[RMDB]
RNA sequence: GGGAACGACUCGAGUAGAGUCGAAAAUUCCAUUUGAGUAUCCUGAAAACGGGCUUUUCAGCAUGGAACGUACAUAUUAAAUAGUAGGAAUGCAUAGUGGCCCGUAUAGCAGGCAUUAACAUUCCUGAAAACGUGAAAAGGUUCGCCUUUUCACGAAUCAGAUAGUUACGUUCGCGUAACUAUCUGAAAAAGAAACAACAACAACAAC
Reactivity to 2A3 in 0.01 (KOAc 150mM, MgCl2 10mM, bicine 150mM(pH8.5), 24C), signal-to-noise 2, nucleotides 027 to 156: u070u000c010c000a020u090u050u050g030a040g050u070a070u130c030c000u030g020a050a010a010a030c000g000g010g000c010u040u070u050u070c030a010g010c010a010u040g030g070a160a030c030g090u120a010c030a060u170a070u100u240a140a160a130u210a110g050u020a000g000g040a140a000u010g000c030a040u030a190g050u030g020g030c000c010c000g030u010a020u020a010g000c020a010g000g040c000a000u030u020a020a010c000a030u040u060c000c000u050g060a080a080a050a040c000g000u000g020a010a020a020a020g030g010u050u060c120g070c000c000u000u000u000u000c000a000c000g000a030a010
Reactivity to DMS in 0.01 (KOAc 150mM, MgCl2 10mM, bicine 150mM(pH8.5), 24C), signal-to-noise 2, nucleotides 027 to 156: u000u010c000c000a130u000u000u000g030a130g010u000a130u000c020c000u000g020a050a110a120a080c020g020g000g030c040u010u000u000u040c020a170g030c010a010u010g020g000a110a060c020g010u000a120c060a090u010a100u000u000a110a090a160u000a130g000u000a050g000g000a090a030u010g010c020a120u000a130g050u000g030g020c010c000c050g000u000a030u000a120g020c060a010g000g000c050a080u000u000a100a100c020a080u000u000c000c000u040g000a050a060a090a190c000g030u000g000a010a010a030a030g000g050u000u000c300g020c000c000u000u000u000u010c000a030c000g000a000a040